Chemical mapping of a 177-nucleotide RNA with 2A3 and DMS. Values cover nucleotides 27 to 126. The 2A3 profile rests on 4,385 reads.
RNA sequence: GGGAACGACUCGAGUAGAGUCGAAAACACAUCAUUUGGUCGAAGUAGCUGUGCGUUUUGCAGCUCCAAGCGCUAUCAAGAAACGGCGUGGUAUUCAACUACGUGCGUCAAUGCGCAGUUUGAUAAGCUAUCGUAUGGAGUUCGCUCCAUACGAUAGAAAAGAAACAACAACAACAAC
Reactivity to 2A3 in 0.01 (KOAc 150mM, MgCl2 10mM, bicine 150mM(pH8.5), 24C), signal-to-noise 5, nucleotides 027 to 126: c050a010c010a030u090c030a080u090u070u230g110g020u110c060g070a120a010g030u100a000g000c000u010g000u060g080c060g080u020u020u150u200g010c030a000g010c000u030c000c010a070a040g000c000g000c010u070a040u160c090a100a070g060a120a100a000c000g000g000c000g010u000g020g020u080a190u150u250c070a060a010c000u020a000c010g040u080g290c000g010u010c020a030a040u070g000c000g000c020a010g030u020u050u080g110a110u080a120a000g030
Reactivity to DMS in 0.01 (KOAc 150mM, MgCl2 10mM, bicine 150mM(pH8.5), 24C), signal-to-noise 5, nucleotides 027 to 126: c060a110c180a040u020c080a090u000u010u000g010g000u010c100g010a100a120g020u000a030g020c010u000g020u000g020c240g020u010u000u010u000g010c040a030g010c030u000c050c060a090a080g020c040g010c000u000a120u000c140a100a070g000a110a090a030c020g000g000c000g030u000g010g030u000a110u010u020c270a080a030c010u000a000c010g010u000g010c030g000u010c060a070a070u010g010c010g000c010a130g000u000u000u000g010a070u020a100a140g010